[RMDB]
RNA sequence: GGGAACGACUCGAGUAGAGUCGAAAAAUCGAAGAAAGACAACCUUUAUUACACGUUCGUGAUGAAAAGGAGUUUUUGCAUACAAUUACAGAACAAGCAGCAAGAAGGGCAGACGAAGACGGCAGAAGAAACUUUUGUAGUUCGCUACAAAAGUUUCAAAAGAAACAACAACAACAAC
Reactivity to 2A3 in 0.01 (KOAc 150mM, MgCl2 10mM, bicine 150mM(pH8.5), 24C), signal-to-noise 1, nucleotides 027 to 126: a030u110c070g020a040a040g110a080a030a000g050a020c050a060a180c060c000u060u010u000a150u070u070a110c110a010c070g130u220u230c070g000u080g020a050u050g040a040a020a000a100g020g000a040g010u060u000u000u060u000g010c030a040u060a040c010a000a110u170u070a070c110a070g080a040a020c070a140a000g110c000a010g030c040a010a020g080a030a030g060g010g000c030a010g000a090c040g000a040a000g040a000c000g000g000c020a020g000a120a000
Reactivity to DMS in 0.01 (KOAc 150mM, MgCl2 10mM, bicine 150mM(pH8.5), 24C), signal-to-noise 2, nucleotides 027 to 126: a070u000c060g000a080a160g000a080a050a030g010a030c020a050a080c000c000u000u000u000a120u040u000a070c010a080c140g040u000u000c170g000u010g000a080u000g010a020a020a030a040g000g010a300g020u000u000u000u000u040g000c100a110u000a110c140a050a090u010u000a090c120a110g000a060a060c050a060a110g010c050a050g000c040a020a070g000a090a120g000g000g010c030a060g000a060c030g000a070a080g000a060c140g000g030c090a080g040a070a170